[RMDB]
RNA sequence: GGGAACGACUCGAGUAGAGUCGAAAACGGAUGGAUCACUAGUGCUGGAAUGCUUGGUGGUCGAAAGGCAACGCCUUUGGAUGGGUCUGCGGCGGAUUAGGUUGACGCCGGUGUAACGUACCGGCGUUAAUUUCCACGCGUUCGCGCGUGGAAAUUAAAAAGAAACAACAACAACAAC
Reactivity to 2A3 in 0.01 (KOAc 150mM, MgCl2 10mM, bicine 150mM(pH8.5), 24C), signal-to-noise 2, nucleotides 027 to 126: c020g010g000a130u160g040g010a010u000c000a000c010u020a090g150u050g210c070u080g020g130a240a070u180g000c010u040u030g090g030u000g000g030u010c000g070a000a010a010g090g000c030a070a080c090g070c030c020u030u030u070g080g000a100u120g000g040g000u000c020u070g010c030g000g000c020g000g040a020u110u250a060g030g010u060u070g000a000c000g000c000c000g000g000u000g000u020a060a000c020g060u000a000c000c000g000g000c000g000u010
Reactivity to DMS in 0.01 (KOAc 150mM, MgCl2 10mM, bicine 150mM(pH8.5), 24C), signal-to-noise 3, nucleotides 027 to 126: c070g010g020a110u030g010g010a010u000c000a020c040u010a080g000u030g020c010u000g000g040a090a100u030g000c010u000u000g020g030u000g000g000u000c010g000a020a040a040g000g030c070a110a110c190g010c030c000u000u020u000g010g000a160u000g000g000g010u010c010u010g000c110g000g000c060g000g000a110u020u050a130g010g000u000u010g010a020c000g010c000c000g000g000u000g000u030a060a220c270g010u030a110c000c000g000g000c000g020u000